Conditions: 150 mM KOAc, 10 mM MgCl2 and 150 mM bicine (pH 8.5), 24 C. Chemical mapping of a 177-nucleotide RNA with DMS and 2A3. High DMS reactivity at an A or C suggests that its Watson-Crick edge is free. For DMS the reverse transcriptase was MarathonRT. 2A3 adducts were read by reverse transcription with SuperScript II with manganese.
RNA sequence: GGGAACGACUCGAGUAGAGUCGAAAAGUGCCGAGCAGGGUAUGGCUGUGCCCGCCGACGAUCACGUCGAUGCCCGGCACGGUGGCGGCCACCUGCUGCUCGACCGUGUAGCCGAGGUGCGAGACGAAUAAUCAUGUCAGUUCGCUGACAUGAUUAUAAAAGAAACAACAACAACAAC
Reactivity to DMS in 0.01 (KOAc 150mM, MgCl2 10mM, bicine 150mM(pH8.5), 24C), signal-to-noise 8, nucleotides 027 to 126: g010u010g040c000c010g010a050g020c010a080g010g000g020u000a070u000g020g010c030u010g020u010g010c020c010c080g020c100c010g000a040c080g010a170u010c210a060c130g010u000c070g010a300u000g000c050c050c030g010g010c000a020c080g010g010u000g020g040c050g010g000c020c060a080c160c050u000g000c030u000g010c010u000c020g010a040c020c020g010u010g010u010a130g010c020c030g000a100g010g020u000g010c030g010a140g010a070c090g010a130
Reactivity to 2A3 in 0.01 (KOAc 150mM, MgCl2 10mM, bicine 150mM(pH8.5), 24C), signal-to-noise 5, nucleotides 027 to 126: g060u060g030c010c010g020a010g020c030a070g020g040g030u170a130u140g110g000c060u070g020u040g060c000c000c000g010c020c010g030a040c020g040a070u220c110a070c260g110u060c030g060a070u110g020c020c040c000g000g020c020a010c010g000g010u030g070g050c020g010g010c020c020a090c030c040u120g030c010u010g000c010u040c020g060a040c020c020g050u060g060u120a040g030c020c040g060a150g000g040u090g080c060g010a030g020a040c020g000a050
About this RNA:
The data come from the RNA Mapping Database (RMDB), library OK2TRN.